[RMDB]
RNA sequence: GGGAACGACUCGAGUAGAGUCGAAAAAGAAUGCACCACAGCGUAAAAUCAUCUGAUUGGGUGAGUUCGUCGCACCGCCAUUUGACGAACGAACGCCAAGCCUAAGCCGUCUUUGUGCAUUAAGUGGAAAAGGAGCCCCAGUUCGCUGGGGCUCCAAGACUAGAAUUAGAUUCGUCUAAUUCUAGUCAAAAGAAACAACAACAACAAC
Reactivity to DMS in 0.01 (KOAc 150mM, MgCl2 10mM, bicine 150mM(pH8.5), 24C), signal-to-noise 1, nucleotides 027 to 156: a100g000a030a050u000g030c010a020c000c070a070c050a100g000c000g030u010a070a100a110a180u010c060a070u000c060u000g010a140u000u000g010g000g110u000g010a110g000u010u000c010g040u000c000g000c070a120c100c050g000c060c050a250u000u000u000g020a010c000g020a050a050c020g020a040a060c020g030c020c110a040a130g020c040c030u020a090a150g000c030c020g040u000c150u010u010u000g000u010g020c000a050u010u000a030a120g030u000g000g010a090a110a130a150g030g030a070g000c000c000c010c010a070g050u010u000c250g040c040u030g020g020g040g040c000u000c010c000a000a080
Reactivity to 2A3 in 0.01 (KOAc 150mM, MgCl2 10mM, bicine 150mM(pH8.5), 24C), signal-to-noise 3, nucleotides 027 to 156: a000g100a020a000u020g000c010a000c010c020a030c090a040g030c010g020u060a040a080a100a140u140c060a040u030c080u130g070a110u060u070g010g000g020u040g020a080g000u000u010c000g000u000c010g010c060a120c080c060g100c030c030a090u060u050u190g010a010c010g010a020a030c010g010a030a010c040g060c060c010a050a000g060c020c020u060a060a000g040c030c020g060u060c070u040u070u060g000u010g000c000a020u010u050a120a060g060u120g100g040a070a110a160a190g020g000a000g000c010c010c010c000a000g000u030u020c090g000c060u010g010g040g000g000c000u000c010c000a000a000